[RMDB]
RNA sequence: GGGAACGACUCGAGUAGAGUCGAAAAGACGCUGUGAAGUGGUUCAUCCGCAGCGGCAAUGCAGGCAGUGAAGGUGAGGCAGUGCUGCUGGGAAAUGACAUGUUGCGUGCCGGCCUACUCCAUCAUGGUAUUAGCCAUAUUUCGAUAUGGCUAAUACAAAAGAAACAACAACAACAAC
Reactivity to DMS in 0.01 (KOAc 150mM, MgCl2 10mM, bicine 150mM(pH8.5), 24C), signal-to-noise 9, nucleotides 027 to 126: g000a070c040g020c010u010g010u010g010a110a130g020u000g000g010u010u000c050a110u000c030c010g010c010a010g010c000g010g010c020a040a030u000g010c020a070g010g000c030a070g010u010g010a140a130g010g010u000g000a140g000g010c010a030g010u000g000c010u000g010c010u000g000g000g000a040a070a060u000g010a080c060a040u000g010u010u000g010c040g010u000g010c060c020g010g010c030c020u000a070c050u000c020c070a060u010c100a090u010g010
Reactivity to 2A3 in 0.01 (KOAc 150mM, MgCl2 10mM, bicine 150mM(pH8.5), 24C), signal-to-noise 9, nucleotides 027 to 126: g060a000c010g000c030u030g040u060g230a170a060g050u040g060g070u090u070c020a040u040c020c030g130c090a000g000c000g000g000c000a010a020u030g000c020a020g170g000c000a040g070u080g300a200a040g140g060u080g040a100g090g020c010a000g020u010g020c000u000g000c010u010g000g010g030a030a190a060u080g010a010c010a030u120g040u110u090g090c020g010u020g060c030c010g010g000c000c000u020a030c010u010c020c010a100u130c030a040u190g120